[RMDB]
RNA sequence: GGGAACGACUCGAGUAGAGUCGAAAACGCAGACGCGCCGAGACAGAACUUAAUGGGCCCGCUAACAGCGCGAUUUGCUGGUGACCCAAUGCGACCAGAUGCUCCACGCCCAGUCGCGUACCGUCUAGCGUACUGAGUAUUUCGAUACUCAGUACGCAAAAGAAACAACAACAACAAC
Reactivity to DMS in 0.01 (KOAc 150mM, MgCl2 10mM, bicine 150mM(pH8.5), 24C), signal-to-noise 2, nucleotides 027 to 126: c150g000c020a090g030a040c060g040c060g000c050c020g020a130g010a110c100a090g010a070a080c060u000u000a130a070u000g010g000g000c070c010c030g030c120u030a080a120c140a050g010c020g010c060g000a200u010u000u010g020c020u000g020g010u010g030a190c030c000c010a060a120u020g010c010g000a070c060c040a020g000a070u000g010c040u000c040c060a040c070g000c020c050c040a070g040u000c040g010c010g010u000a040c100c070g000u000c100u010a170
Reactivity to 2A3 in 0.01 (KOAc 150mM, MgCl2 10mM, bicine 150mM(pH8.5), 24C), signal-to-noise 2, nucleotides 027 to 126: c060g000c020a010g010a060c020g000c030g000c010c030g000a000g040a030c050a040g070a150a050c030u100u170a120a040u160g040g010g000c020c060c000g020c020u040a120a020c010a020g040c030g000c020g070a110u030u010u070g020c030u030g000g100u070g040a080c000c000c000a010a050u080g010c020g040a020c000c040a040g010a140u070g020c000u000c040c000a040c030g000c000c020c010a020g030u000c010g000c010g010u020a100c000c040g080u020c030u050a030